[RMDB]
RNA sequence: GGGAACGACUCGAGUAGAGUCGAAAACUCGAAAGAGACCUGCAUAUCUUAGGCAGAUGAUCAAGUCGCGUCUGAAAAGCGAAAGCCCUAAGAUAUGCAGCUGUGACGACUUGUCGCAGAAAAUAAACGUCAUGGUAAUAUUCGUAUUACCAUGACGAAAAGAAACAACAACAACAAC
Reactivity to 2A3 in 0.01 (KOAc 150mM, MgCl2 10mM, bicine 150mM(pH8.5), 24C), signal-to-noise 9, nucleotides 027 to 126: c000u000c010g030a010a050a010g090a010g020a050c000c000u000g000c000a000u000a000u000c000u000u000a000g000g000c010a010g000a060u030g010a040u130c050a070a010g070u070c040g020c000g050u000c020u040g100a190a190a100a020g010c010g040a060a040a010g010c000c000c000u000a000a000g000a000u000a000u000g000c000a000g000c000u000g000u010g000a010c040g060a120c050u060u160g000u020c010g000c000a000g120a020a090a010a010u260a030a090a010
Reactivity to DMS in 0.01 (KOAc 150mM, MgCl2 10mM, bicine 150mM(pH8.5), 24C), signal-to-noise 5, nucleotides 027 to 126: c010u000c010g000a100a110a130g000a030g000a170c200c000u000g020c000a000u000a000u000c000u000u020a000g000g020c000a020g010a000u010g000a060u040c040a010a030g010u010c040g010c020g010u000c010u000g000a160a060a140a080g000c000g000a090a060a150g030c010c000c000u000a000a010g000a010u000a000u000g000c000a000g000c030u010g000u000g010a030c040g010a080c090u030u020g010u000c010g020c010a010g000a110a020a070a070u050a030a090a170

An RNA of 177 nucleotides, treated with 2A3 and DMS and read out base by base. Reactivities are rounded to 0.1 and cut off at 0 and 3. The RNA was probed in 150 mM KOAc, 10 mM MgCl2 and 150 mM bicine (pH 8.5) at 24 C.